[RMDB]
RNA sequence: GGGAACGACUCGAGUAGAGUCGAAAAGGAGGGUUGGCUUCGUCAUCAACACACACAGUUUAUAAUAACUGGCAAAUCAAACAAUAAUUUCGCAGUAGCUGCCUAAUCGCACUCUGCAUCGCCUAACAGCAUUUCCUAUGUGCUGUUAACGCGAUUCGUUUCAUGUAUGCUUCGGCAUACAUGAAACAAAAGAAACAACAACAACAAC
Reactivity to DMS in 0.01 (KOAc 150mM, MgCl2 10mM, bicine 150mM(pH8.5), 24C), signal-to-noise 1, nucleotides 027 to 156: g000g010a140g020g010g020u010u010g000g030c030u010u000c090g040u000c080a200u010c020a010a070c050a050c040a120c020a010c040a140g010u000u000u000a070u010a120a140u000a080a050c000u000g020g000c070a020a100a140u000c010a090a080a130c090a020a170u000a170a280u000u000u000c110g030c000a020g000u000a010g060c000u010g070c000c010u000a060a140u000c140g000c000a000c000u000c000u010g020c020a090u010c000g010c010c030u000a000a040c010a060g010c000a020u000u000u000c260c140u000a050u000g020u000g010c000u020g050u000u010a000a080c050g000c000g000a010u010u020c100
Reactivity to 2A3 in 0.01 (KOAc 150mM, MgCl2 10mM, bicine 150mM(pH8.5), 24C), signal-to-noise 3, nucleotides 027 to 156: g050g000a020g050g020g020u160u070g020g020c050u040u010c030g120u020c000a090u040c020a050a070c020a000c010a000c000a000c000a090g010u010u010u070a300u100a170a040u130a020a040c010u010g020g000c020a030a090a040u100c050a040a040a140c040a020a060u160a120a120u070u170u190c060g000c000a000g020u190a020g010c170u010g010c010c020u050a050a060u120c040g000c020a010c000u010c000u010g000c030a000u010c000g000c000c020u020a000a000c000a000g010c010a010u060u060u150c020c050u110a110u300g010u000g000c000u010g000u000u000a010a010c010g000c020g020a020u050u070c040
Chemical mapping of a 207-nucleotide RNA with DMS and 2A3.
The reactions ran in a buffer of 150 mM KOAc, 10 mM MgCl2 and 150 mM bicine (pH 8.5), at 24 C.
The DMS profile rests on 1,578 reads.